[RMDB]
RNA sequence: GGGAACGACUCGAGUAGAGUCGAAAAUCCAUAAGGUUCGCCUUAUGGAAAAAGCGGCCAGCACCAGGCCGCAAAAAUAAAUGGAGCACAAGACGAAAGUCAAAACAGUACUCUUCGGAGUACUGAAGAUGAGGAGUAAGUUCGCUUACUCCUCAUCAAAAGAAACAACAACAACAAC
Reactivity to DMS in 0.01 (KOAc 150mM, MgCl2 10mM, bicine 150mM(pH8.5), 24C), signal-to-noise 2, nucleotides 027 to 126: u010c000c000a000u000a010a000g000g020u000u010c250g010c000c000u000u000a000u000g000g010a010a020a040a110a090g020c000g010g010c000c000a090g000c000a200c020c000a000g000g010c000c010g000c010a000a010a040a020a040u010a000a040a050u010g020g000a090g010c000a110c300a070a090g000a020c050g000a090a080a140g020u020c040a100a080a040a130c000a000g010u000a000c000u000c010u000u020c130g010g010a010g020u000a000c000u010g000a040a080
Reactivity to 2A3 in 0.01 (KOAc 150mM, MgCl2 10mM, bicine 150mM(pH8.5), 24C), signal-to-noise 2, nucleotides 027 to 126: u020c000c000a000u000a000a000g050g000u030u110c150g100c010c000u000u000a000u000g000g030a100a030a010a010a000g000c010g010g000c000c000a010g020c010a020c010c000a010g010g000c000c010g000c010a000a030a020a000a000u030a000a010a010u030g000g000a040g020c030a020c030a110a020g020a000c020g030a090a030a010g000u040c020a020a050a020a030c000a000g000u000a000c010u020c020u040u080c190g130g000a010g000u000a000c000u000g000a000a010

The record gives the reactivity of an RNA of 177 nucleotides to DMS and 2A3. 2A3 adducts were read by reverse transcription with SuperScript II with manganese. It was measured as part of the RMDB library M2PK50. The reactions ran in a buffer of 150 mM KOAc, 10 mM MgCl2 and 150 mM bicine (pH 8.5), at 24 C. Values cover nucleotides 27 to 126.